The record gives the reactivity of an RNA of 177 nucleotides to DMS and 2A3.
RNA sequence: GGGAACGACUCGAGUAGAGUCGAAAACACCAGGACCAUAGAGCAUAGUCUUGGGAUCUGGUAUAGUUAAGAGAAACUGCCCAAUGCAGCUUCGUCUUGCUGUGCAACUAUAUUAGGGCAUGUAGCAACUCACUAUGUCCUUCGGGACAUAGUGAGUAAAAGAAACAACAACAACAAC
Reactivity to DMS in 0.01 (KOAc 150mM, MgCl2 10mM, bicine 150mM(pH8.5), 24C), signal-to-noise 2, nucleotides 027 to 126: c050a160c000c000a020g000g000a060c000c030a070u020a040g000a100g030c200a140u040a120g000u010c010u000u000g000g000g000a120u030c000u000g000g020u000a030u000a000g000u000u040a010a020g010a210g020a000a030a050c000u000g000c020c120c180a070a110u030g000c040a000g000c040u000u000c010g010u030c070u010u000g000c050u010g030u020g000c100a010a010c040u030a050u030a050u000u000a070g000g000g000c000a060u000g020u000a080g010c110a120
Reactivity to 2A3 in 0.01 (KOAc 150mM, MgCl2 10mM, bicine 150mM(pH8.5), 24C), signal-to-noise 2, nucleotides 027 to 126: c010a000c000c000a010g000g020a000c010c020a050u100a020g060a000g010c220a220u220a110g000u070c000u040u060g070g000g010a090u000c010u020g000g000u050a030u110a000g100u130u150a060a020g070a030g010a200a020a000c000u010g010c000c040c000a010a020u190g000c000a000g000c010u020u110c060g260u010c060u010u110g000c020u010g000u060g000c010a080a040c060u020a000u000a020u050u100a040g000g000g010c040a000u040g010u000a030g020c010a000
The RNA was probed in 150 mM KOAc, 10 mM MgCl2 and 150 mM bicine (pH 8.5) at 24 C. Values cover nucleotides 27 to 126. It was measured as part of the RMDB library OK1LIB. 2A3 is a SHAPE reagent: it acylates the 2'-hydroxyl of flexible nucleotides of all four kinds.